[RMDB]
RNA sequence: GGGAACGACUCGAGUAGAGUCGAAAAGGACAAGACUGGUGCCAGCACCCGCGGUAAUACCAGCUCCUGGAGUGUCUAUGAUGAUUGCUGCAGUUAAAGAGUUCGUAGUCGAAGUGGUUAUAACGGCUUCUUAGAGACAAUUCGUUGUCUCUAAGAAAAAAGAAACAACAACAACAAC
Reactivity to 2A3 in 0.01 (KOAc 150mM, MgCl2 10mM, bicine 150mM(pH8.5), 24C), signal-to-noise 9, nucleotides 027 to 126: g050g010a030c040a050a040g040a040c040u050g030g030u040g040c010c000a020g020c030a060c010c020c010g010c020g020g010u070a070a030u050a150c010c010a010g020c020u020c000c010u010g020g030a050g020u060g010u000c010u030a100u140g070a060u050g010a020u080u170g020c010u020g010c020a050g010u100u120a120a090a010g060a010g010u030u040c020g020u060a020g010u030c020g000a090a010g040u070g050g050u070u020a060u030a150a060c040g030g000c000
Reactivity to DMS in 0.01 (KOAc 150mM, MgCl2 10mM, bicine 150mM(pH8.5), 24C), signal-to-noise 9, nucleotides 027 to 126: g010g010a110c140a080a070g010a100c040u010g010g010u010g010c020c020a080g010c070a120c070c050c090g010c080g020g000u010a070a090u020a190c030c030a070g000c050u000c030c010u000g010g000a080g010u010g010u010c020u010a070u020g010a070u020g000a070u020u010g010c030u000g010c040a050g010u010u010a040a070a080g000a080g010u010u000c060g020u010a070g010u000c020g000a070a110g010u010g000g010u010u010a070u020a070a100c100g000g000c110
Notes: The record gives the reactivity of an RNA of 177 nucleotides to 2A3 and DMS. 2A3 adducts were read by reverse transcription with SuperScript II with manganese. The data come from the RNA Mapping Database (RMDB), libraries RFM100 and RFMREP. Reactivities are given for positions 27 through 126.